[RMDB]
RNA sequence: GGGAACGACUCGAGUAGAGUCGAAAAAGCAUCUCCUACGUGCUGUUAACGCGAUUCAACCCUAGUAGGAUAUGCUAAACACUGCCGCUUGAAGUCUGUUUAGAUGAAAUAUAAUCAAGCUAGUAUCAUGUUGGUUGUUUAUUGCUUAGCAUGAUGCCCCUUCUAGGUGGUUCGCCACCUAGAAGGGAAAAGAAACAACAACAACAAC
Reactivity to 2A3 in 0.01 (KOAc 150mM, MgCl2 10mM, bicine 150mM(pH8.5), 24C), signal-to-noise 2, nucleotides 027 to 156: a010g010c010a010u000c000u000c070c000u000a000c000g000u000g020c000u010g030u200u120a230a100c150g040c130g190a110u130u160c080a020a100c000c000c030u020a010g020u000a000g000g000a000u000a000u010g010c000u000a000a000a000c010a000c000u010g010c000c050g000c000u000u010g000a030a000g000u000c000u010g000u050u000u000a000g000a040u040g040a000a280a040u250a060u050a020a000u020c000a010a000g000c000u000a010g010u030a020u020c010a010u010g020u030u070g100g000u010u060g120u180u190u260a260u280u280g050c060u100u210a010g040c000a020u020g000a000u020g000c000